RNA sequence: GGGAACGACUCGAGUAGAGUCGAAAACUCUCAGCCACAUGUGGGUUUACUUGGCCAUUGUGGACUAGUCUGGGAACCCAGAUAUGAUCUAUAACAUUGACCCAGUAGAAUAUUGAUUCCAAAACCACUGUCUCACAAAUGAAUUUUUACAAGAGUCCCCCUACUUGGAUUUCGAUCCAAGUAGGGGAAAAGAAACAACAACAACAAC
Reactivity to 2A3 in 0.01 (KOAc 150mM, MgCl2 10mM, bicine 150mM(pH8.5), 24C), signal-to-noise 1, nucleotides 027 to 156: c020u030c000u030c020a030g070c000c040a080c000a040u210g030u040g050g010g040u070u050u020a000c000u000u060g010g010c020c000a010u030u030g050u030g020g000a000c040u040a080g090u000c000u030g000g000g110a160a150c030c000c000a000g010a020u070a070u070g140a130u000c040u020a090u040a200a080c030a040u020u050g040a040c000c030c070a020g000u000a020g040a090a030u070a070u090u250g090a080u060u130c060c010a030a050a090a090c020c030a030c030u080g010u040c000u070c110a070c040a100a020a050u050g020a100a090u160u050u060u190u200a080c060a060a000g070a030g120u170c070

Chemical mapping of a 207-nucleotide RNA with 2A3. The 2A3 profile rests on 425 reads. Reactivities are rounded to 0.1 and cut off at 0 and 3. The data come from the RNA Mapping Database (RMDB), library OK3TST.